[RMDB]
RNA sequence: GGGAACGACUCGAGUAGAGUCGAAAAGAUAUGGAGACGGUGGCUUCAAUGAUGGGACUAAUUCCCAAGUAAAUCGGAAACGAUUUACUUGGGAAUUAGUCCUUGAGAAGCACCUGUCUCCUAAGUCCGAUAAGAUGAACUUCGGUUCAUCUUAUCGAAAAGAAACAACAACAACAAC
Reactivity to DMS in 0.01 (KOAc 150mM, MgCl2 10mM, bicine 150mM(pH8.5), 24C), signal-to-noise 3, nucleotides 027 to 126: g000a120u010a300u010g010g000a010g010a010c010g020g010u000g020g000c010u000u010c000a290a190u000g010a150u010g000g010g010a020c010u010a000a010u000u000c000c000c000a000a010g010u000a000a000a010u000c010g000g010a140a130a280c000g000a020u000u010u000a000c010u000u010g000g010g000a000a000u000u000a000g000u000c000c000u000u000g010a070g010a010a000g000c000a000c020c000u000g010u010c000u000c000c000u000a020a100g000u000c060